[RMDB]
RNA sequence: GGGAACGACUCGAGUAGAGUCGAAAAUAACAUCCAAUGAUUUAAUUGCAACAUCCUGAGAUUCCUUUAAGGAUCUCGAGCUUUCGUAAGAAAGUGGCACAAACUGAAUGGAAUCACCGGGUUUAACCAUAGUCAGUCAGUUCGCUGACUGACUAUGAAAAGAAACAACAACAACAAC
Reactivity to DMS in 0.01 (KOAc 150mM, MgCl2 10mM, bicine 150mM(pH8.5), 24C), signal-to-noise 5, nucleotides 027 to 126: u020a090a100c180a090u020c030c040a050a130u020g000a140u020u020u020a070a090u020u010g010c150a090a100c150a070u020c060c030u020g020a070g000a010u010u010c000c010u000u010u020a120a070g010g000a040u000c040u020c070g000a240g000c000u000u000u000c000g000u070a100a190g000a000a000a000g010u000g000g010c110a060c190a060a030a080c050u020g000a040a050u010g000g020a030a000u010c000a090c080c110g010g010g010u000u010u030a150a090c230
Reactivity to 2A3 in 0.01 (KOAc 150mM, MgCl2 10mM, bicine 150mM(pH8.5), 24C), signal-to-noise 6, nucleotides 027 to 126: u140a040a030c050a070u030c030c020a110a070u120g120a110u140u160u240a200a130u140u170g080c070a070a060c010a080u080c020c010u090g010a050g000a080u080u110c000c000u070u130u200a090a010g020g030a070u020c010u020c050g030a020g000c000u000u000u010c010g030u070a060a050g010a010a010a010g020u050g060g000c110a020c040a090a100a010c030u030g020a050a040u090g020g040a020a010u020c000a010c110c040g010g010g070u030u080u080a010a000c010

This 177-nucleotide RNA was probed chemically with DMS and 2A3.
DMS adducts were read by reverse transcription with MarathonRT.
2A3 adducts were read by reverse transcription with SuperScript II with manganese.